[RMDB]
Annotation
Structure probing data (2A3) for a 207-nucleotide construct. 2A3 adducts were read by reverse transcription with SuperScript II with manganese. The data come from the RNA Mapping Database (RMDB), library M2RFPK.
RNA sequence: GGGAACGACUCGAGUAGAGUCGAAAACCUGGCUCGAAAUCGUCGACGCAUCGACGACGGUCCUGCCAUGAGACCGUAACGAGGACAUGUCGCCUCGAAUGGCGUCGGGGAGCCGACAGCUUACCCCAAAACGACCGCAGCUUCGGCUGCGGUCGAAGAACUAUUGAAGCUUCGGCUUCAAUAGUUCAAAAGAAACAACAACAACAAC
Reactivity to 2A3 in 0.01 (KOAc 150mM, MgCl2 10mM, bicine 150mM(pH8.5), 24C), signal-to-noise 1, nucleotides 027 to 156: c000c010u040g170g020c050u050c150g070a240a060a100u040c050g040u000c000g020a080c090g110c170a140u040c010g000a000c000g010a000c000g000g030u010c000c010u050g060c030c000a020u040g010a000g010a030c010c010g030u090a050a050c030g010a000g000g000a030c020a180u250g070u210c130g040c000c010u000c010g010a000a010u010g000g010c030g010u110c090g000g000g000g010a000g060c000c000g100a040c010a030g020c000u020u180a170c000c000c000c020a000a170a000a070c010g010a020c010c000g000c020a000g000c010u060u160c200g080g000c000u050g010c000g010g000u000c000g160a000a000

Conditions: 150 mM KOAc, 10 mM MgCl2 and 150 mM bicine (pH 8.5), 24 C.